[RMDB]
RNA sequence: GGGAACGACUCGAGUAGAGUCGAAAACGGCCCCUCGAGGAGGGUUGCCGGGAUUGGCCGGAACCAGGUGACUGGAUCCUUUCACCCGCUGAGGUGACUGUGGCCCCCGGAGCCCCCCUCGAGGGGCCCAGCCACAUCUAUUCGUAGAUGUGGCUGGAAAAGAAACAACAACAACAAC
Reactivity to DMS in 0.01 (KOAc 150mM, MgCl2 10mM, bicine 150mM(pH8.5), 24C), signal-to-noise 2, nucleotides 027 to 126: c070g010g010c000c000c000c000u000c000g010a020g000g000a040g020g000g010u000u020g010c000c000g000g000g000a160u020u030g000g010c000c000g020g010a020a070c010c000a010g000g000u090g010a210c000u010g010g000a040u000c010c000u000u000u000c010a000c010c000c000g000c300u020g000a160g020g020u000g000a010c150u000g000u020g020g010c010c000c010c000c010g000g000a100g000c000c010c000c030c000c010u000c000g000a000g000g000g000g000c010
Reactivity to 2A3 in 0.01 (KOAc 150mM, MgCl2 10mM, bicine 150mM(pH8.5), 24C), signal-to-noise 3, nucleotides 027 to 126: c030g030g000c000c000c000c000u000c000g000a000g000g010a020g040g010g030u030u110g290c010c010g000g000g010a150u220u300g010g010c000c000g020g010a010a030c000c000a010g000g050u100g100a080c010u010g000g020a070u030c010c000u010u040u010c010a010c010c030c010g200c300u260g050a120g110g000u010g000a010c040u090g060u210g060g000c020c020c000c000c000g000g000a000g000c000c000c000c000c000c000u000c000g000a000g000g000g000g000c000